[RMDB]
RNA sequence: GGGAACGACUCGAGUAGAGUCGAAAAUGGUAGAAUCAUGGGGUUAUGAUGAACUUCUUCAUCAUAUCAGAAAAUUCUAUGCAUGGGUAUUGGACCAAGCCCCAUACAAUGAAUUAGCACGAAGUGGGAAUGGGAGCAGUUUCGACUGCUCCCAUUCAAAAGAAACAACAACAACAAC
Reactivity to DMS in 0.01 (KOAc 150mM, MgCl2 10mM, bicine 150mM(pH8.5), 24C), signal-to-noise 2, nucleotides 027 to 126: u010g000g020u000a020g010a040a090u010c100a040u010g030g000g000g010u020u000a010u000g010a000u010g000a020a070c300u040u070c180u000u000c010a000u000c000a000u000a000u000c010a100g000a120a090a070a010u010u010c000u010a070u000g040c070a000u000g010g020g010u010a060u010u030g020g000a140c110c070a040a140g020c080c000c000c030a050u000a080c080a050a150u010g000a060a060u000u010a100g000c120a300c020g000a040a110g020u010g000g000
Reactivity to 2A3 in 0.01 (KOAc 150mM, MgCl2 10mM, bicine 150mM(pH8.5), 24C), signal-to-noise 3, nucleotides 027 to 126: u040g010g000u010a070g010a010a040u060c050a070u180g090g000g000g000u020u050a000u000g000a000u060g010a050a090c080u190u080c000u150u020c050a000u010c000a000u000a020u010c030a000g260a000a110a000a000u030u000c010u010a000u040g170c020a030u020g000g000g030u160a150u070u160g190g050a060c000c060a010a000g030c000c000c000c000a020u100a110c030a040a150u020g030a060a070u100u090a120g010c080a010c100g040a070a030g020u130g100g080